Description
An RNA of 177 nucleotides, treated with DMS and 2A3 and read out base by base. For DMS the reverse transcriptase was MarathonRT. Conditions: 150 mM KOAc, 10 mM MgCl2 and 150 mM bicine (pH 8.5), 24 C. The data come from the RNA Mapping Database (RMDB), library OK2TST.
RNA sequence: GGGAACGACUCGAGUAGAGUCGAAAAUUGUGGUGGCAAUAUUGUUAUUCCAGGAACAGAUCAGAAUAGUCAUUUGAACCGUGCUUUGGCAAAUGAAAUGGGAUUGAUGAUUGCACAUCAUCAUGCAAUCCAUUUAGCCUUUCGAGGCUAAAUGGAUAAAAGAAACAACAACAACAAC
Reactivity to DMS in 0.01 (KOAc 150mM, MgCl2 10mM, bicine 150mM(pH8.5), 24C), signal-to-noise 4, nucleotides 027 to 126: u000u000g020u000g020g030u000g000g010c030a050a040u000a060u000u010g010u000u020a070u000u000c030c030a060g010g020a120a120c140a080g000a070u000c060a070g020a090a090u000a110g010u010c030a060u010u000u000g020a070a150c050c040g010u000g010c170u000u010u020g010g000c030a000a030a060u000g000a020a100a070u000g000g010g000a060u000u010g000a030u000g000a020u000u010g010c080a050c070a080u010c020a010u000c110a050u000g010c150a070
Reactivity to 2A3 in 0.01 (KOAc 150mM, MgCl2 10mM, bicine 150mM(pH8.5), 24C), signal-to-noise 3, nucleotides 027 to 126: u060u100g030u040g020g010u010g020g000c010a010a030u110a070u140u100g070u070u040a050u050u030c030c030a010g070g000a040a080c050a090g090a120u140c030a010g070a150a040u100a110g060u010c010a060u020u040u060g030a110a060c010c000g070u120g050c090u150u190u150g030g020c000a010a040a080u070g010a040a050a030u040g020g000g030a050u030u080g010a000u050g000a000u000u090g030c060a070c010a230u010c000a010u010c000a000u060g020c020a050